[RMDB]
This 177-nucleotide RNA was probed chemically with 2A3 and DMS.
The reactions ran in a buffer of 150 mM KOAc, 10 mM MgCl2 and 150 mM bicine (pH 8.5), at 24 C.
For 2A3, 1,993 sequencing reads were counted.
Values cover nucleotides 27 to 126.
RNA sequence: GGGAACGACUCGAGUAGAGUCGAAAAGAUAUGGAUCGUCCUGAACUACGCGCCGGCGGUCGGAAACGACCGGUCAGCGCAGGAGCGAUCCUAAGUCAAAACACAGUCUCCUUCGGGAGACUGUGAAGGUGUGUUUAAACUUCGGUUUAAACACACCAAAAGAAACAACAACAACAAC
Reactivity to 2A3 in 0.01 (KOAc 150mM, MgCl2 10mM, bicine 150mM(pH8.5), 24C), signal-to-noise 1, nucleotides 027 to 126: g000a020u050a010u090g000g010a010u010c010g000u030c000c000u060g020a190a130c110u280a140c300g050c000g000c140c000g030g090c070g070g080u060c030g010g010a050a030a020c010g000a040c000c000g060g090u140c050a000g000c030g000c020a000g000g020a130g250c000g000a010u000c000c000u000a030a010g030u000c020a000a080a150a050c020a000c010a000g000u000c000u020c000c000u080u160c240g140g000g000a010g000a010c000u010g000u000g000a010a020
Reactivity to DMS in 0.01 (KOAc 150mM, MgCl2 10mM, bicine 150mM(pH8.5), 24C), signal-to-noise 1, nucleotides 027 to 126: g020a060u020a140u000g010g000a010u000c010g000u000c030c000u000g000a150a060c210u010a130c190g030c020g040c020c030g040g000c030g000g020u010c020g010g000a060a020a110c000g000a020c000c010g020g000u000c000a020g040c010g120c000a020g010g000a070g010c030g010a010u000c010c010u000a010a050g010u010c040a070a100a110a180c020a000c000a020g010u010c000u000c000c000u000u000c250g000g010g010a010g010a000c010u000g010u000g010a010a130
For DMS, 1,169 sequencing reads were counted. The data come from the RNA Mapping Database (RMDB), library TTRDEL.